RNA sequence: GGGAACGACUCGAGUAGAGUCGAAAAGAUAUGGACGGAGAACUACAGCCACUGGAGGCGCAGAUAUGUCUAAUUUCGGAAACGAAAUUAGACAUGUAGCCUCUGGUGGCUGCUCCGUCCUAAGUCAGAACAUUUGUAAGUUCGCUUACAAAUGUUCAAAAGAAACAACAACAACAAC
Reactivity to 2A3 in 0.01 (KOAc 150mM, MgCl2 10mM, bicine 150mM(pH8.5), 24C), signal-to-noise 1, nucleotides 027 to 126: g020a030u010a020u090g000g000a020c000g090g040a000g020a110a040c130u230a110c300a010g020c020c000a000c000u030g020g040a000g030g000c030g030c050a100g120a300u190a010u100g010u000c000u010a010a000u000u000u000c000g010g000a000a030a030c000g020a020a000a020u000u000a000g000a010c000a000u000g000u030a000g000c000c000u020c000u000g000g000u000g000g000c000u000g020c000u000c000c000g000u010c000c000u000a000a000g010u000c000a020
Reactivity to DMS in 0.01 (KOAc 150mM, MgCl2 10mM, bicine 150mM(pH8.5), 24C), signal-to-noise 2, nucleotides 027 to 126: g000a020u000a060u010g000g000a020c000g010g000a030g000a110a020c090u030a300c000a010g000c010c000a020c000u000g010g010a010g010g020c000g080c300a100g010a080u020a060u000g000u010c000u000a010a000u000u010u000c000g020g000a020a020a040c010g000a010a000a010u000u000a000g000a010c000a000u000g030u010a070g010c000c000u000c000u000g020g030u000g010g010c000u000g000c000u000c000c000g000u000c010c000u000a000a030g010u000c010a210